About this RNA
An RNA of 177 nucleotides, treated with 2A3 and read out base by base. It was measured as part of the RMDB library OK1LIB. The RNA was probed in 150 mM KOAc, 10 mM MgCl2 and 150 mM bicine (pH 8.5) at 24 C. The 2A3 profile rests on 422 reads.

RNA sequence: GGGAACGACUCGAGUAGAGUCGAAAAACACACUGUUGGCCAUCGCGCGCAACGCCGAAGAAAGUGGCGACGAUAAUGCCGUGGACGCCAACGGCGCAGACCAGACGGGCAAUUAAUCAGGCUCGCCGGCCGUCGGUAAGUUCGCUUACCGACGGCCAAAAGAAACAACAACAACAAC
Reactivity to 2A3 in 0.01 (KOAc 150mM, MgCl2 10mM, bicine 150mM(pH8.5), 24C), signal-to-noise 1, nucleotides 027 to 126: a000c110a010c000a000c000u120g000u000u000g000g000c010c000a150u000c000g000c000g000c030g000c040a060a060c010g000c000c000g090a150a120g160a070a300a010g090u150g000g000c000g130a110c100g010a010u180a300a130u220g000c010c000g000u000g000g000a000c050g040c040c100a000a000c000g000g000c100g000c010a000g030a080c020c020a000g030a080c000g000g000g200c000a000a300u100u260a110a050u020c000a000g050g040c000u010c030g000c000c000